[RMDB]
RNA sequence: GGGAACGACUCGAGUAGAGUCGAAAAUGAGACAAACACGCUUCACAAUGUGCGGCAAAGAAACAUUGUUUAUGCAAAGGCACUUCGCAAUGUGUGCUCAAACUUUGCUUAUUCAAACACGCUUCACAAAAGAAUCAGUGGUUCGCCACUGAUUCAAUCAUAUAACCAGGUUCGCCUGGUUAUAUGAAAAAGAAACAACAACAACAAC
Reactivity to DMS in 0.01 (KOAc 150mM, MgCl2 10mM, bicine 150mM(pH8.5), 24C), signal-to-noise 4, nucleotides 027 to 156: u000g020a180g010a200c070a090a080a110c070a030c040g020c010u000u000c080a060c040a070a060u010g050u000g010c010g050g030c030a090a090a090g030a100a040a050c000a080u000u010g010u000u010u000a060u010g010c020a060a100a070g020g010c030a040c020u000u010c120g030c080a130a090u010g030u010g020u010g000c060u020c050a050a100a120c020u000u000u000g010c010u000u000a100u000u010c080a090a090a110c060a110c110g010c020u000u000c020a140c060a050a090a130a190g000a020a010u000c000a000g020u000g010g020u000u000c300g020c010c000a020c000u010g000a000u010u000c010a020a060
Reactivity to 2A3 in 0.01 (KOAc 150mM, MgCl2 10mM, bicine 150mM(pH8.5), 24C), signal-to-noise 9, nucleotides 027 to 156: u160g010a020g040a040c060a020a170a000c070a020c060g000c010u020u020c020a010c010a040a040u020g000u010g000c010g020g060c070a100a090a060g080a030a060a000c010a020u010u010g050u040u060u070a080u090g000c000a010a010a000g030g000c010a010c020u140u130c130g060c170a110a140u180g040u010g020u010g050c020u070c100a100a100a050c010u000u010u010g010c010u040u080a090u100u140c090a050a110a030c050a020c130g080c040u120u110c080a050c040a130a090a040a040g000a000a000u000c000a000g000u000g050g030u030u040c180g030c050c000a000c000u000g000a000u000u000c000a000a000
The data come from the RNA Mapping Database (RMDB), library M2RFPK. Chemical mapping of a 207-nucleotide RNA with DMS and 2A3. For 2A3, 18,415 sequencing reads were counted.